About this RNA
The record gives the reactivity of an RNA of 177 nucleotides to DMS. It was measured as part of the RMDB library TTRINS. For DMS the reverse transcriptase was MarathonRT.
RNA sequence: GGGAACGACUCGAGUAGAGUCGAAAAGAUAUGGAAUAACAGACUAGUAACGUGAUAGACAUGCCUUGAACUCGGAAACGAGUUCACAGGCAACAGCUAUACGUUACUAGUCUGUUAUUCCUAAGUCGUUUAUCUUCUGGUUCGCCAGAAGAUAAACAAAAGAAACAACAACAACAAC
Reactivity to DMS in 0.01 (KOAc 150mM, MgCl2 10mM, bicine 150mM(pH8.5), 24C), signal-to-noise 2, nucleotides 027 to 126: g010a070u010a300u010g000g000a030a000u000a030a010c000a000g000a020c000u000a010g000u000a010a010c000g020u000g020a020u000a000g000a070c050a300u000g030c000c010u000u020g010a020a010c000u000c000g010g010a110a130a280c000g020a000g020u000u000c000a010c300a020g010g010c010a000a040c260a150g010c000u000a010u000a010c000g000u000u000a010c000u000a000g000u000c000u010g000u010u000a000u000u000c000c010u000a010a070g010u010c110